The record gives the reactivity of an RNA of 177 nucleotides to 2A3. The data come from the RNA Mapping Database (RMDB), library OK1LIB. The reactions ran in a buffer of 150 mM KOAc, 10 mM MgCl2 and 150 mM bicine (pH 8.5), at 24 C.
RNA sequence: GGGAACGACUCGAGUAGAGUCGAAAACUAGGCCACGCAGCAAAAAAAAAAACAAAAUCCAAUUUUGGAAUACUAUUUUUAUGUCCGCAAAAUAGAUUAAUUUCCUUGAAAAUAGUAAUCUAGGCCAACUAUGCACCACUUUCGAGUGGUGCAUAGUAAAAGAAACAACAACAACAAC
Reactivity to 2A3 in 0.01 (KOAc 150mM, MgCl2 10mM, bicine 150mM(pH8.5), 24C), signal-to-noise 2, nucleotides 027 to 126: c030u030a050g000g000c000c000a010c020g010c010a010g050c080a060a000a000a000a000a000a060a060a000a000a080c070a030a190a030a030u020c020c090a080a120u100u040u070u080g020g030a040a030u090a050c000u010a100u010u040u010u030u060a090u080g010u050c050c010g000c040a030a060a020a050u050a030g000a020u020u020a030a040u020u100u050c060c050u050u110g110a070a000a000a000u030a060g080u030a010a020u010c030u010a030g060g000c000c000a000